[RMDB]
Notes
Structure probing data (2A3 and DMS) for a 177-nucleotide construct. Conditions: 150 mM KOAc, 10 mM MgCl2 and 150 mM bicine (pH 8.5), 24 C. The 2A3 profile rests on 11,819 reads. 2A3 adducts were read by reverse transcription with SuperScript II with manganese. In probing experiments dimethyl sulfate is read out at A N1 and C N3, which are open when not base-paired.
RNA sequence: GGGAACGACUCGAGUAGAGUCGAAAAGUUGAAGUGUUCGCACUUCAACAAACGCUCAACUCAUGGAGCGCAAGACGAAUAGCUACAUAUUCGACAUGAGAAAAAGACUGUAGUUCGCUACAGUCAACGAGGAAAAGAAGUUCGCUUCUUUUCCUCGAAAAGAAACAACAACAACAAC
Reactivity to 2A3 in 0.01 (KOAc 150mM, MgCl2 10mM, bicine 150mM(pH8.5), 24C), signal-to-noise 6, nucleotides 027 to 126: g000u000u010g000a000a010g000u000g030u060u130c170g050c070a000c000u000u000c000a000a000c000a000a000a010c010g000c010u010c000a020a090c040u000c010a010u000g010g000a010g000c040g010c190a120a030g120a040c020g000a000a010u020a020g050c110u240a080c090a230u040a040u010u010c000g010a010c010a020u020g000a000g060a060a030a000a010a000g010a000c000u000g000u000a010g010u010u080c230g000c080u000a000c000a000g000u000c000a000a010
Reactivity to DMS in 0.01 (KOAc 150mM, MgCl2 10mM, bicine 150mM(pH8.5), 24C), signal-to-noise 4, nucleotides 027 to 126: g010u000u010g010a010a010g010u000g020u000u000c240g020c000a000c000u000u000c010a000a010c000a040a110a200c010g010c000u000c000a080a040c000u000c000a010u000g010g000a020g020c000g020c110a090a050g020a030c010g000a020a010u000a010g010c200u000a140c180a150u000a010u000u010c010g000a090c010a010u000g000a000g020a150a090a110a100a100g000a020c000u000g010u000a000g020u000u010c260g010c000u000a000c000a000g010u000c000a030a040